The record gives the reactivity of an RNA of 170 nucleotides to DMS and 2A3. It was measured as part of the RMDB library 15KLIB.
RNA sequence: GGGAACGACUCGAGUAGAGUCGAAAAUUGCUAUGACCAUGCCUAAGACUUGUUUCGGACCCAUAGUCCGAAAGAUCUUUGUUGAUGGCGUGCCAUUUGUAGUAUCUUGUGGUUAUCACUACAAAGAAGAGGUGUGCCUUCGGGCACACCAAAAGAAACAACAACAACAAC
Reactivity to DMS in 0.01 (KOAc 150mM, MgCl2 10mM, bicine 150mM(pH8.5), 24C), signal-to-noise 4, nucleotides 027 to 129: u080u020g050c000u020a000u010g020a020c280c030a040u020g020c060c040u040a110a190g010a030c030u020u030g000u020u000u000c000g020g000a040c020c130c250a200u000a180g030u050c000c000g020a000a070a050g010a190u060c010u030u020u070g040u040u020g010a240u000g000g060c000g060u030g020c140c010a110u050u040u020g020u000a030g010u010a050u030c020u000u000g040u000g050g000u080u020a020u070c230a090c000u030a030c060a040a000a090g020a010a090g020a110
Reactivity to 2A3 in 0.01 (KOAc 150mM, MgCl2 10mM, bicine 150mM(pH8.5), 24C), signal-to-noise 3, nucleotides 027 to 129: u090u000g000c040u050a020u130g020a110c040c030a010u090g000c000c000u090a060a000g000a000c040u110u190g020u100u020u000c000g000g000a000c040c040c090a170u300a020g010u000c000c030g020a000a000a000g000a040u030c050u020u080u140g060u040u080g120a050u110g010g000c000g000u040g030c010c010a060u050u050u140g010u010a060g010u000a040u040c040u020u110g010u060g090g020u050u070a070u180c060a010c010u010a020c020a000a070a010g030a000a050g140a040